[RMDB]
RNA sequence: GGGAACGACUCGAGUAGAGUCGAAAAAGAACUAGCGAUUGUAAAAGGCUGAUUGCGCUAAGAUAUGGAAUUAGCGCAAAUAGGUCCGAAUUCCUUGAUAACAUUUCGGACAACCGCGCUAAAACAACAUAGCAUUAACAUUCGUGUUAAUGCUAUGAAAAGAAACAACAACAACAAC
Reactivity to DMS in 0.01 (KOAc 150mM, MgCl2 10mM, bicine 150mM(pH8.5), 24C), signal-to-noise 9, nucleotides 027 to 126: a080g000a120a100c140u010a050g010c020g010a080u010u010g010u010a060a080a120a120g010g000c020u010g010a140u000u000g010c010g010c010u000a010a020g010a140u000a160u020g010g010a090a100u000u000a000g010c010g010c000a000a010a060u000a100g010g000u000c000c000g000a020a050u000u000c090c060u010u020g010a090u010a080a120c180a100u000u000u000c000g010g000a020c000a030a050c050c070g010c010g010c100u000a020a050a050a080c170a050a120
Reactivity to 2A3 in 0.01 (KOAc 150mM, MgCl2 10mM, bicine 150mM(pH8.5), 24C), signal-to-noise 6, nucleotides 027 to 126: a000g060a030a020c020u010a010g000c010g080a080u060u190g080u150a060a110a060a040g070g010c030u040g050a110u030u050g000c000g000c010u010a020a010g050a130u190a130u300g080g010a050a100u020u010a010g000c000g000c000a010a000a010u020a000g000g000u000c000c000g010a000a020u060u070c030c000u060u100g070a040u060a130a040c040a110u040u030u010c000g000g000a000c010a010a010c060c020g010c010g000c020u050a060a060a020a030c040a020a020